[RMDB]
RNA sequence: GGGAACGACUCGAGUAGAGUCGAAAAAAGGACGUUUCGAUACGUAUCCAAAACGUCGCGGCAUCACGCGCGUUAAAGAGAUGCUGGAGUCCGGCAUUAACGUCUGCUUUGGUCACGAUGAUGUCUAAUGGUAUGGUCAUUUCGAUGACCAUACCAUAAAAGAAACAACAACAACAAC
Reactivity to 2A3 in 0.01 (KOAc 150mM, MgCl2 10mM, bicine 150mM(pH8.5), 24C), signal-to-noise 2, nucleotides 027 to 126: a010a000g090g000a010c010g000u020u020u070c110g060a110u050a210c060g060u060a080u060c010c000a040a070a020a030c050g040u120c020g020c000g020g000c000a090u070c020a030c050g020c000g000c020g020u020u040a040a050a000g100a020g000a000u020g010c020u050g070g000a130g200u040c050c000g000g030c010a000u090u030a100a000c020g070u010c050u100g040c020u120u120u140g060g000u110c010a010c040g070a060u060g020a030u060g040u040c050u100a130
Reactivity to DMS in 0.01 (KOAc 150mM, MgCl2 10mM, bicine 150mM(pH8.5), 24C), signal-to-noise 4, nucleotides 027 to 126: a060a140g020g000a010c030g020u000u000u000c220g010a090u010a080c160g020u000a060u000c020c050a090a060a070a040c030g020u030c020g010c060g000g000c120a110u000c070a050c040g020c030g010c050g000u000u000a010a070a120g010a100g010a020u000g020c010u010g000g010a230g010u020c040c030g020g030c020a070u000u000a060a060c090g010u000c070u000g000c080u010u010u000g010g020u000c030a050c060g010a060u000g010a040u000g000u000c040u010a060